An RNA of 177 nucleotides, treated with DMS and 2A3 and read out base by base. The reactions ran in a buffer of 150 mM KOAc, 10 mM MgCl2 and 150 mM bicine (pH 8.5), at 24 C. For DMS the reverse transcriptase was MarathonRT.
RNA sequence: GGGAACGACUCGAGUAGAGUCGAAAAGAACACCUCCUCAAGCGCCGCGUGCACUUCAGCAGCAGGUCGCUUAGAGUACACGCGCACGCGACAGAGCGUACCGAUAACAAGCUCCGCACGCGAAUACCCAUACUGCCGGUUUCGACCGGCAGUAUGGAAAAGAAACAACAACAACAAC
Reactivity to DMS in 0.01 (KOAc 150mM, MgCl2 10mM, bicine 150mM(pH8.5), 24C), signal-to-noise 2, nucleotides 027 to 126: g000a080a140c150a100c000c020u000c000c000u000c060a000a080g000c010g000c300c010g000c000g000u060g020c020a110c180u010u040c300a140g050c020a030g000c010a030g010g000u060c100g000c000u000u000a170g000a020g000u010a140c000a190c020g020c030g040c070a060c080g030c000g010a120c110a100g000a090g010c030g000u000a110c040c060g000a230u000a070a110c180a100a090g000c000u000c070c020g000c070a110c050g000c040g040a060a030u020a070c130
Reactivity to 2A3 in 0.01 (KOAc 150mM, MgCl2 10mM, bicine 150mM(pH8.5), 24C), signal-to-noise 4, nucleotides 027 to 126: g130a020a040c050a030c030c000u050c030c000u040c030a040a010g020c010g000c010c000g010c010g100u040g000c020a040c090u180u100c130a060g000c020a020g000c040a090g020g120u160c040g000c000u000u020a030g000a000g020u060a010c040a000c040g000c000g000c010a030c050g000c000g100a050c050a060g040a000g020c020g030u090a090c030c040g070a040u070a120a050c060a110a000g010c000u010c040c010g000c010a010c010g010c020g000a010a020u080a100c000